An RNA of 170 nucleotides, treated with DMS and 2A3 and read out base by base. The RNA was probed in 150 mM KOAc, 10 mM MgCl2 and 150 mM bicine (pH 8.5) at 24 C. Values cover nucleotides 27 to 129. High 2A3 reactivity points to a flexible backbone, as in loops and unpaired stretches.
RNA sequence: GGGAACGACUCGAGUAGAGUCGAAAAUGGAACCACAACUAAUGUUGACAAAAUACGCCAGCUUCUCAAAGGUGUCACCCUUGACAAGUUGCGUGAUUAUUUAGCUGACUAUGACGUAGCAGUCACUCAAUCCUUAUGUUCGCAUAAGGAAAAAGAAACAACAACAACAAC
Reactivity to DMS in 0.01 (KOAc 150mM, MgCl2 10mM, bicine 150mM(pH8.5), 24C), signal-to-noise 9, nucleotides 027 to 129: u050g000g000a150a180c000c000a140c110a040a050c100u000a110a100u020g010u000u000g030a090c130a060a040a030a030u000a020c020g000c080c040a030g020c000u010u000c180u000c040a020a030a060g020g000u010g000u030c240a050c010c000c000u040u000g000a040c080a010a010g020u000u000g000c150g020u000g000a070u040u020a080u030u010u010a040g030c030u000g000a010c030u000a090u000g020a040c140g040u030a010g040c070a050g020u010c050a110c120u000c110a060a130
Reactivity to 2A3 in 0.01 (KOAc 150mM, MgCl2 10mM, bicine 150mM(pH8.5), 24C), signal-to-noise 9, nucleotides 027 to 129: u100g030g030a020a030c020c020a040c030a100a060c040u220a110a080u170g030u050u040g030a030c060a030a110a010a020u080a030c000g020c030c010a000g010c000u000u000c000u000c000a080a090a020g030g010u080g090u130c090a100c020c010c000u010u010g000a010c020a020a010g000u000u010g010c030g030u010g030a040u020u070a030u040u060u050a020g010c020u010g060a100c010u050a040u160g070a030c070g010u010a010g020c030a000g030u020c000a020c040u060c030a030a080